[RMDB]
The record gives the reactivity of an RNA of 207 nucleotides to 2A3. Conditions: 150 mM KOAc, 10 mM MgCl2 and 150 mM bicine (pH 8.5), 24 C.
RNA sequence: GGGAACGACUCGAGUAGAGUCGAAAACAGGUGGCCAAGGCCUACCAGGACCGCUAUCAGGACCUGGGGGCCUACAGUUCUGCCAGGAAGUGCCUGGCCAAACAGAGGCAGAGGAUGCUGCAAGAGAGAAAAGCUGCAAAAGAGGCCGCCGCUGCCAUCGCCUAAUAUGAUUCGUCAUAUUAGGCGAAAAAGAAACAACAACAACAAC
Reactivity to 2A3 in 0.01 (KOAc 150mM, MgCl2 10mM, bicine 150mM(pH8.5), 24C), signal-to-noise 1, nucleotides 027 to 156: c020a010g000g020u000g000g000c000c030a010a010g030g000c010c010u050a300c150c000a000g000g000a110c000c000g000c140u170a260u300c250a260g040g040a120c010c000u040g010g000g000g000g010c000c010u000a000c000a010g030u120u000c040u070g000c030c000a030g040g010a170a100g090u110g160c000c000u000g010g040c000c000a060a060a060c010a010g080a120g090g060c000a000g090a010g000g060a110u090g040c040u000g020c060a090a070g060a000g000a000g040a300a150a080a050g010c000u110g000c020a050a000a010a130g140a120g000g000c000c000g000c010c000g010c030u070g000c010c000a040